RNA sequence: GGGAACGACUCGAGUAGAGUCGAAAAGAAGACGUGACGAAAAGUCACGAAAAGAGCUAGUAAUGUUCAAUUAGCAAAGAAAAGAAAAUGAACAAAAAGAAAAGAGAUCGGAGACGAUCUCAAAAGACGUCCAUAUCGCAUUCGUGCGAUAUGGACGAAAAGAAACAACAACAACAAC
Reactivity to 2A3 in 0.01 (KOAc 150mM, MgCl2 10mM, bicine 150mM(pH8.5), 24C), signal-to-noise 1, nucleotides 027 to 126: g130a010a000g160a070c000g010u000g020a000c000g080a050a000a300a070g000u000c000a000c000g000a000a030a000a010g140a000g000c010u020a000g020u120a250a230u100g000u000u000c000a010a010u020u060a000g000c040a120a060a090g060a010a130a020a020g160a020a020a010a020u050g000a000a000c020a010a150a040a000a000g160a000a160a000a040g030a000g000a000u000c000g000g000a060g000a040c040g000a000u000c000u010c050a000a000a000a000g000a000